[RMDB]
RNA sequence: GGGAACGACUCGAGUAGAGUCGAAAAGGUUUUGGUCACAAGUAGGAAGAAGCCAGUGCACCAGACCGGCAAAGAGAAGCGGGAGCCGCCGCGGCAGCGCGGCCGUGGGGUCCGCCGCCGCCGCAUCGCCUAAACCAAAGUUCGCUUUGGUUUAGGCAAAAGAAACAACAACAACAAC
Reactivity to 2A3 in 0.01 (KOAc 150mM, MgCl2 10mM, bicine 150mM(pH8.5), 24C), signal-to-noise 1, nucleotides 027 to 126: g050g000u010u030u170u070g010g000u040c010a020c040a100a110g070u150a150g210g070a140a140g070a080a020g120c020c060a020g010u010g020c100a000c010c020a020g040a030c000c010g000g010c040a110a160a060g060a090g010a170a000g020c060g000g030g010a060g070c060c000g030c000c040g000c000g030g020c000a010g050c050g010c040g110g000c020c010g050u140g030g170g000g000u020c010c010g030c070c010g010c000c000g000c060c000g000c030a060u100c050
Reactivity to DMS in 0.01 (KOAc 150mM, MgCl2 10mM, bicine 150mM(pH8.5), 24C), signal-to-noise 2, nucleotides 027 to 126: g000g020u010u010u000u010g010g000u020c020a030c040a070a160g020u010a120g000g020a150a110g020a100a200g010c020c050a100g030u010g030c130a060c010c010a060g010a040c030c030g000g010c100a060a080a140g000a080g010a080a090g000c080g020g000g010a060g020c080c040g000c130c120g010c020g010g030c020a030g000c070g000c100g020g000c000c050g000u010g000g000g000g010u010c010c020g000c030c030g020c020c010g000c000c040g000c100a070u010c150

The record gives the reactivity of an RNA of 177 nucleotides to 2A3 and DMS. 2A3 adducts were read by reverse transcription with SuperScript II with manganese. The 2A3 profile rests on 1,296 reads.